[RMDB]
RNA sequence: GGGAACGACUCGAGUAGAGUCGAAAAAUUACGGGCGGCGCAGGUGGAGCUGCGAUGCCUCCGCCCAUCGCGUGCUCUCUCGGUGGCCCAGACGCUGCAAACGGACAGGCGGGCCACCUGCAACGAAAACCGUAACAUCGUUCGCGAUGUUACGGUUAAAAGAAACAACAACAACAAC
Reactivity to DMS in 0.01 (KOAc 150mM, MgCl2 10mM, bicine 150mM(pH8.5), 24C), signal-to-noise 2, nucleotides 027 to 126: a040u030u000a110c220g000g010g030c020g010g030c130g010c300a090g020g010u000g000g010a040g030c040u020g050c100g010a100u000g010c140c040u000c000c010g000c020c010c020a020u010c040g020c000g000u020g040c020u000c010u000c060u000c070g030g020u000g000g010c000c000c010a130g020a110c030g000c000u000g000c110a090a140a120c250g010g010a150c010a020g000g000c030g000g000g000c000c000a000c000c010u000g010c100a050a080c130g020a130a070
Reactivity to 2A3 in 0.01 (KOAc 150mM, MgCl2 10mM, bicine 150mM(pH8.5), 24C), signal-to-noise 1, nucleotides 027 to 126: a000u140u070a040c070g000g000g010c010g020g050c020g000c010a010g010g000u060g020g030a010g040c020u040g040c060g030a010u060g020c040c020u010c020c030g000c000c020c000a060u180c040g000c000g020u050g030c000u000c000u000c000u010c060g010g000u000g000g010c000c000c000a070g010a030c080g090c160u000g000c050a140a220a160c100g030g080a090c000a020g020g040c000g000g020g020c000c000a020c010c000u010g020c010a060a010c040g130a070a150
Description:
The record gives the reactivity of an RNA of 177 nucleotides to DMS and 2A3. The DMS profile rests on 1,163 reads. The RNA was probed in 150 mM KOAc, 10 mM MgCl2 and 150 mM bicine (pH 8.5) at 24 C. Values cover nucleotides 27 to 126. The data come from the RNA Mapping Database (RMDB), library M2PK90. For 2A3 the reverse transcriptase was SuperScript II with manganese. DMS adducts were read by reverse transcription with MarathonRT.